Conditions: 150 mM KOAc, 10 mM MgCl2 and 150 mM bicine (pH 8.5), 24 C. The record gives the reactivity of an RNA of 170 nucleotides to 2A3 and DMS. 2A3 adducts were read by reverse transcription with SuperScript II with manganese.
RNA sequence: GGGAACGACUCGAGUAGAGUCGAAAAGAGAAGUCUCAAGCUACGAGGGGGGACCCCCGAGACGCUGGAGACGCCCGGGAACAAGGAAAUAGAACAAGGUACGGUAGAAAAGAGCGAGCCUCCCGAUCAAGAGUUACCUUCGGGUAACUCAAAAGAAACAACAACAACAAC
Reactivity to 2A3 in 0.01 (KOAc 150mM, MgCl2 10mM, bicine 150mM(pH8.5), 24C), signal-to-noise 7, nucleotides 027 to 129: g100a000g010a150a030g030u010c010u000c040a020a010g010c010u060a050c070g010a090g000g000g010g010g070g130a110c020c000c000c000c010g020a010g010a010c060g000c020u020g020g010a000g010a010c010g010c010c000c010g020g020g000a050a040c040a030a010g060g020a020a050a050u160a080g030a050a020c050a060a040g040g000u080a030c050g020g030u060a040g090a040a110a040a000g060a010g030c060g000a000g000c020c000u040c000c000c000g030a050u100c080a100a060
Reactivity to DMS in 0.01 (KOAc 150mM, MgCl2 10mM, bicine 150mM(pH8.5), 24C), signal-to-noise 6, nucleotides 027 to 129: g000a120g020a090a100g030u020c000u020c030a100a060g040c060u020a280c000g000a250g010g020g000g020g050g020a060c080c010c010c000c010g020a160g000a060c260g030c000u030g030g020a000g020a030c050g020c000c000c000g000g000g000a090a050c110a000a030g030g010a000a020a050u050a000g020a050a050c130a150a060g000g040u000a030c080g000g000u010a030g030a060a080a100a070g020a070g020c030g000a060g020c000c020u020c030c040c030g000a060u070c120a080a090
For DMS the reverse transcriptase was MarathonRT.